[RMDB]
RNA sequence: GGGAACGACUCGAGUAGAGUCGAAAAAUGGGAGUGAUGAAGAACAAUUUUUAUUUGGACUAGAGUUUCUGAUACUGCUACUUUGUGGUAGUUGAAGACUAAACCCUUGGCUGUCUGAACUUCCAUAGAGGAACUGGCAAUUCGUUGCCAGUUCCUCAAAAGAAACAACAACAACAAC
Reactivity to 2A3 in 0.01 (KOAc 150mM, MgCl2 10mM, bicine 150mM(pH8.5), 24C), signal-to-noise 2, nucleotides 027 to 126: a000u070g010g000g000a050g030u070g030a060u020g000a000a020g150a110a000c020a010a070u020u020u090u240u210a300u090u000u220g010g040a000c010u020a110g000a010g300u060u120u010c010u010g010a020u020a000c000u000g000c000u000a010c040u060u090u300g070u050g000g000u000a000g000u000u000g000a000a000g000a000c000u050a020a000a120c020c010c000u000u040g000g020c070u030g140u300c000u040g020a000a000c030u030u000c100c020a000u020a050